[RMDB]
RNA sequence: GGGAACGACUCGAGUAGAGUCGAAAAACUCAUCCCAGCUUACAUUGAAUCAGCUCGACAGUACGUCGUUAAUUCAGUCGGGGAUGAUCCAAAAUUUUACAACCUCGACAGUGUGAGAGCUUUGUUUGAUACGGCUGUAAUAGCCCUAACAAGCUCAAAAGGUUAGAUCAUUCGUGAUCUAACCUUUAAAAGAAACAACAACAACAAC
Reactivity to DMS in 0.01 (KOAc 150mM, MgCl2 10mM, bicine 150mM(pH8.5), 24C), signal-to-noise 3, nucleotides 027 to 156: a060c070u000c040a140u010c020c000c000a300g010c180u010u000a100c080a110u030u010g020a060a030u000c040a070g060c030u000c030g020a060c020a300g010u000a120c140g020u000c000g000u000u000a050a060u000u020c020a180g020u000c010g000g000g020g020a110u000g010a030u000c090c090a100a030a090a150u000u000u030u000a100c040a080a110c010c000u010c010g020a050c010a090g020u000g000u000g000a160g010a060g030c020u000u000u000g010u000u000u000g040a180u010a130c090g040g020c010u010g030u010a160a140u010a020g020c000c000c040u000a060a060c010a020a030g000c010u000c010a060
Reactivity to 2A3 in 0.01 (KOAc 150mM, MgCl2 10mM, bicine 150mM(pH8.5), 24C), signal-to-noise 2, nucleotides 027 to 156: a000c020u030c020a020u020c000c020c020a020g010c050u040u120a020c020a260u120u260g070a190a070u090c060a040g050c060u040c070g020a010c020a070g160u300a130c060g030u040c000g040u060u150a020a010u140u090c020a020g000u000c000g000g000g020g050a010u090g030a020u000c020c040a020a290a080a150u190u270u090u060a030c000a020a080c020c000u000c010g060a060c050a150g090u050g000u090g300a100g000a000g010c000u110u070u120g030u000u010u020g070a130u100a180c000g000g000c020u010g010u010a040a040u020a300g000c000c000c000u000a000a000c000a030a000g000c000u000c010a040